[RMDB]
RNA sequence: GGGAACGACUCGAGUAGAGUCGAAAAGACGUGGAGGUUGCGCGCCCUCCUUUGCGCGUAAGUACGUCGAAAUUCGGUGCUUCGGAUCGCACCGUUGGAUCCAUUUGAUAUCCGCUUUGUGCCGCGGUUGGGCAUUUACACUUACCCGAAAGGGGAACCACUGCUAUCAGUUCGCUGAUAGCAGUGGAAAAGAAACAACAACAACAAC
Reactivity to DMS in 0.01 (KOAc 150mM, MgCl2 10mM, bicine 150mM(pH8.5), 24C), signal-to-noise 1, nucleotides 027 to 156: g010a040c050g010u010g040g010a100g040g010u030u010g010c000g020c080g000c070c080c090u010c110c060u000u000u000g020c010g000c040g050u000a020a110g000u000a010c020g000u000c000g000a040a040a170u010u000c020g020g010u010g000c030u000u020c040g040g030a150u000c200g000c000a060c010c020g000u000u000g010g000a080u010c010c030a300u010u020u010g010a150u010a110u000c020c040g010c120u000u000u030g040u000g010c010c050g000c070g020g000u000u000g000g050g030c040a080u000u000u000a080c100a100c120u010u000a240c000c000c010g020a130a090a190g000g010g020g000a070a160
Reactivity to 2A3 in 0.01 (KOAc 150mM, MgCl2 10mM, bicine 150mM(pH8.5), 24C), signal-to-noise 3, nucleotides 027 to 156: g030a000c000g010u050g000g150a110g080g190u040u010g000c000g000c000g010c040c000c010u220c020c050u060u110u150g000c010g010c000g010u000a020a010g140u020a010c020g000u000c010g000a020a010a050u050u030c000g000g000u000g000c000u080u090c020g050g060a070u080c040g000c010a000c020c000g000u010u000g030g030a050u000c000c050a120u080u050u180g140a080u050a060u050c010c000g020c080u100u140u120g080u030g020c000c020g100c050g120g000u070u070g060g000g020c010a020u080u140u070a050c140a010c020u110u090a060c000c000c010g020a050a050a060g040g000g000g000a000a020